Conditions: 150 mM KOAc, 10 mM MgCl2 and 150 mM bicine (pH 8.5), 24 C.
Structure probing data (DMS and 2A3) for a 207-nucleotide construct.
The 2A3 profile rests on 2,182 reads.
RNA sequence: GGGAACGACUCGAGUAGAGUCGAAAACUGAGAGUUUGGGGGAAGCCAACAAGGCCAGUGCUGAGUGAGACCUCAGAUGUAGGAGGUACAAGGGUUAGAUUCUCAAGAUCAAGACUCAGCCCUUAGCCAGACAUGGUGGUAGGCACCUGUAGUCGCAUAUAGCUAUCUUCUUCGGAAGAUAGCUAUAAAAAGAAACAACAACAACAAC
Reactivity to DMS in 0.01 (KOAc 150mM, MgCl2 10mM, bicine 150mM(pH8.5), 24C), signal-to-noise 3, nucleotides 027 to 156: c040u010g010a140g000a090g020u000u000u000g000g000g010g010g010a140a120g040c050c030a050a110c060a120a160g020g000c000c020a070g010u000g040c010u000g000a090g060u000g020a220g000a060c040c000u000c040a080g010a130u000g010u000a110g030g020a060g020g020u000a070c080a080a070g000g020g010u000u000a110g010a110u000u000c010u000c070a130a120g000a100u000c030a100a110g000a060c030u000c010a060g030c000c000c000u000u000a130g000c000c020a110g000a100c100a100u000g000g000u000g000g020u000a100g030g000c030a080c050c020u000g010u000a050g020u000c020g020c060a230
Reactivity to 2A3 in 0.01 (KOAc 150mM, MgCl2 10mM, bicine 150mM(pH8.5), 24C), signal-to-noise 3, nucleotides 027 to 156: c040u030g010a020g010a010g090u040u070u130g020g000g000g000g020a050a000g000c020c020a040a040c030a110a070g060g030c040c010a060g000u010g090c010u010g030a030g030u050g030a100g010a050c000c000u020c010a030g010a150u080g070u110a030g100g050a020g050g010u030a040c040a040a090g000g000g030u050u050a090g020a040u080u030c020u010c070a090a040g040a150u130c060a030a040g020a030c020u000c010a000g000c020c000c000u020u040a030g000c000c000a020g020a050c040a050u080g010g040u050g020g060u070a040g040g010c010a030c010c010u030g080u130a050g030u050c020g010c060a000